[RMDB]
RNA sequence: GGGAACGACUCGAGUAGAGUCGAAAAUAAACAUAGAGGAACCACAAAUGAAGCCAGGGAUAAGUACAUCAAUGAUUUACUAAAGAAUGAUGCUAGACAAUGUGAAGGAGCUUACCUCAGAGCAAUAAGUUCAUCUUACAACUUCGGAACUGGACUCCUGCAGAACAAAGUUCGCUUUGUUCUGCAGAAAAGAAACAACAACAACAAC
Reactivity to 2A3 in 0.01 (KOAc 150mM, MgCl2 10mM, bicine 150mM(pH8.5), 24C), signal-to-noise 3, nucleotides 027 to 156: u040a010a020a000c020a030u260a060g040a030g030g000a050a040c030c030a040c040a060a130a050u150g040a020a010g010c030c000a000g030g010g040a040u080a100a060g050u060a040c010a030u020c020a070a150u100g060a070u070u110u140a070c030u130a170a020a060g030a030a060u060g030a030u020g030c030u040a020g010a050c030a100a060u070g050u050g050a010a020g030g000a030g010c020u020u020a020c000c000u100c060a010g030a010g010c040a050a060u120a090a020g020u040u040c020a060u100c070u140u140a090c060a110a040c090u100u110c020g050g040a020a030c010u040g000g050a030c020u030c010
Reactivity to DMS in 0.01 (KOAc 150mM, MgCl2 10mM, bicine 150mM(pH8.5), 24C), signal-to-noise 1, nucleotides 027 to 156: u010a060a050a110c010a080u020a100g000a120g020g020a070a160c050c040a100c050a020a020a080u000g000a050a070g020c010c040a050g030g000g010a070u000a020a120g050u000a030c100a080u000c000a040a110u000g000a160u000u000u010a280c120u010a090a080a130g000a080a100u000g040a110u000g040c000u000a080g020a120c040a010a040u000g010u000g070a190a120g000g000a050g020c020u000u000a060c080c030u000c040a150g010a020g000c040a030a100u000a070a150g000u000u000c070a040u000c050u000u000a060c030a000a080c010u000u000c090g000g020a040a070c050u000g050g010a060c030u000c010